[RMDB]
RNA sequence: GGGAACGACUCGAGUAGAGUCGAAAAGGGUUGUAGUUCGCUACAACCCAAAGAAAAGAGCAAGGACCAGCUCAAUAAAGGUCCAAAAAGAACGAAAGUACAAAAUCGUGAAGUUCGCUUCACGAAACAGUAUAGGAGACUUCGGUCUCCUAUACUGAAAAGAAACAACAACAACAAC
Reactivity to DMS in 0.01 (KOAc 150mM, MgCl2 10mM, bicine 150mM(pH8.5), 24C), signal-to-noise 2, nucleotides 027 to 126: g000g000g000u010u030g020u000a000g020u000u050c300g030c010u000a000c010a010a010c000c000c000a010a030a050g020a030a070a090a200g000a000g010c000a050a100g000g020a000c000c000a050g000c030u000c020a100a160u000a000a050a150g030g040u000c000c000a060a050a060a120a080g000a080a060c060g000a120a060a100g000u010a070c170a110a040a070a060u020c000g000u000g000a030a010g000u030u000c220g000c010u010u000c000a010c000g010a040a030a060
Reactivity to 2A3 in 0.01 (KOAc 150mM, MgCl2 10mM, bicine 150mM(pH8.5), 24C), signal-to-noise 2, nucleotides 027 to 126: g000g000g000u000u000g000u000a020g010u010u070c170g020c100u000a000c010a010a010c000c000c000a000a000a000g000a000a070a010a040g020a000g000c020a060a150g050g010a000c010c000a020g010c020u020c030a010a010u150a000a070a000g000g010u000c000c000a050a050a020a020a020g030a030a000c070g100a200a190a030g050u170a110c130a120a130a030a170u030c000g000u010g020a000a000g020u020u070c260g070c060u000u000c000a000c000g000a010a050a010